[RMDB]
RNA sequence: GGGAACGACUCGAGUAGAGUCGAAAAGCAUAAUGCCUUCGGGCAUUAUGCAAAAAAACCUUUGUGCAUUGUCAGUCGGUGUAGGCCCAUUGGGCCUGACACUCGACUUGGAUUUAUGCACUCUGGUAAAAAAUCCUUGAGCUUCGGCUCAAGGAAACAUAAGGUUUUUGUUCGCAAAAACCUUAUGAAAAGAAACAACAACAACAAC
Reactivity to DMS in 0.01 (KOAc 150mM, MgCl2 10mM, bicine 150mM(pH8.5), 24C), signal-to-noise 1, nucleotides 027 to 156: g000c000a000u010a010a000u000g010c000c010u010u000c300g090g040g020c000a000u000u010a000u000g000c030a010a000a050a110a040a060a040c010c000u000u000u000g000u000g020c010a040u000u000g000u000c000a040g020u000c000g020g040u000g030u000a050g010g030c000c000c030a300u000u000g060g050g080c000c000u010g030a030c010a000c020u000c010g040a030c000u010u000g020g010a020u020u000u000a020u020g000c000a000c010u000c020u000g000g000u020a000a030a080a120a090a090u000c000c000u000u000g000a020g040c000u000u000c300g040g030c010u000c000a010a010g010g010a000a010a070
Reactivity to 2A3 in 0.01 (KOAc 150mM, MgCl2 10mM, bicine 150mM(pH8.5), 24C), signal-to-noise 2, nucleotides 027 to 156: g000c000a020u010a000a020u000g000c000c020u040u090c270g030g000g000c000a000u000u000a000u000g000c000a010a000a000a000a000a010a020c020c000u020u020u000g010u000g010c000a000u010u000g000u040c010a010g000u000c010g020g000u010g010u010a000g010g000c000c020c110a220u270u300g020g000g000c000c010u040g030a010c000a000c000u190c030g000a000c000u000u030g020g010a000u030u120u300a000u020g000c000a000c000u000c000u000g000g000u080a170a080a000a000a000a040u010c000c000u000u000g000a000g000c020u070u130c300g080g000c010u000c000a000a000g000g000a030a000a000

Source information
This 207-nucleotide RNA was probed chemically with DMS and 2A3. The reactions ran in a buffer of 150 mM KOAc, 10 mM MgCl2 and 150 mM bicine (pH 8.5), at 24 C. The DMS profile rests on 3,137 reads. The 2A3 profile rests on 1,559 reads. It was measured as part of the RMDB library RNAMAK.